[RMDB]
RNA sequence: GGGAACGACUCGAGUAGAGUCGAAAACUCCGGCUCACCGGUAAUAACUGAGUCCGGCGACCUCGUAGGAAUUCACACCGGCUCCAACAAACAGGGCGGAGGUAUCAUCACCCGCCCAGAUGGAACGUACCAGUAGUGUGUUCGCACACUACUGGUAAAAAGAAACAACAACAACAAC
Reactivity to 2A3 in 0.01 (KOAc 150mM, MgCl2 10mM, bicine 150mM(pH8.5), 24C), signal-to-noise 1, nucleotides 027 to 126: c000u000c000c040g000g000c040u040c020a090c010c060g090g050u030a080a090u120a160a080c140u090g010a010g080u080c020c000g000g000c020g080a080c010c020u000c020g020u110a030g070g140a100a240u170u120c050a060c000a010c130c000g000g000c030u020c010c000a050a080c070a080a130a020c050a100g000g000g000c000g000g010a100g080g000u100a240u180c070a050u000c010a070c000c000c000g010c000c000c010a000g000a010u090g000g020a030a080c010g050
Reactivity to DMS in 0.01 (KOAc 150mM, MgCl2 10mM, bicine 150mM(pH8.5), 24C), signal-to-noise 3, nucleotides 027 to 126: c040u000c030c040g010g010c150u010c010a070c100c040g010g020u000a050a120u010a140a090c100u010g010a120g030u000c000c000g000g020c140g020a140c090c060u020c030g010u000a090g020g000a120a050u000u000c090a090c070a080c060c010g010g010c030u010c010c000a060a080c060a090a090a180c200a130g010g010g010c000g030g010a070g000g010u000a070u030c130a060u000c060a140c040c000c000g010c000c000c000a010g000a090u010g000g010a110a100c160g000